[RMDB]
RNA sequence: GGGAACGACUCGAGUAGAGUCGAAAAAAUUGUCUAGAUGGACCGACAGUUUAUCUAAUUUUAAGAAUGUUUGUACCAUGCUGAAAUUUUCCAUGGUUAAUGAUUCAAAGGGUAUAAGAACAUACAAUCGGAUAAGUACAUUCGUGUACUUAUCCGAAAAAGAAACAACAACAACAAC
Reactivity to 2A3 in 0.01 (KOAc 150mM, MgCl2 10mM, bicine 150mM(pH8.5), 24C), signal-to-noise 1, nucleotides 027 to 126: a030a050u160u070g000u000c020u010a060g010a090u040g060g030a010c050c000g040a030c000a010g030u040u020u020a060u010c050u040a030a230u000u150u190u150a140a020g050a040a000u010g110u160u070u020g020u080a040c000c010a080u010g080c060u010g090a140a300a300u200u160u070u020c000c000a000u000g000g000u000u070a090a080u080g070a010u000u090c000a040a040a050g100g040g000u070a040u040a180a090g080a010a000c000a010u000a000c000a020a020
Reactivity to DMS in 0.01 (KOAc 150mM, MgCl2 10mM, bicine 150mM(pH8.5), 24C), signal-to-noise 4, nucleotides 027 to 126: a050a050u000u000g000u000c040u010a130g030a080u000g010g010a050c090c080g020a050c090a090g010u000u000u000a040u000c030u030a050a100u000u010u010u010a090a130g000a060a030u010g010u000u000u010g020u000a050c070c000a010u000g020c190u000g000a070a040a140u010u000u010u000c050c010a050u000g010g010u000u000a030a030u010g000a060u010u010c020a050a100a080g010g000g010u000a090u000a080a130g020a050a030c050a040u000a130c180a030a040
Chemical mapping of a 177-nucleotide RNA with 2A3 and DMS. For DMS, 2,917 sequencing reads were counted. For 2A3 the reverse transcriptase was SuperScript II with manganese. The data come from the RNA Mapping Database (RMDB), library OK2TRN. Conditions: 150 mM KOAc, 10 mM MgCl2 and 150 mM bicine (pH 8.5), 24 C. DMS adducts were read by reverse transcription with MarathonRT.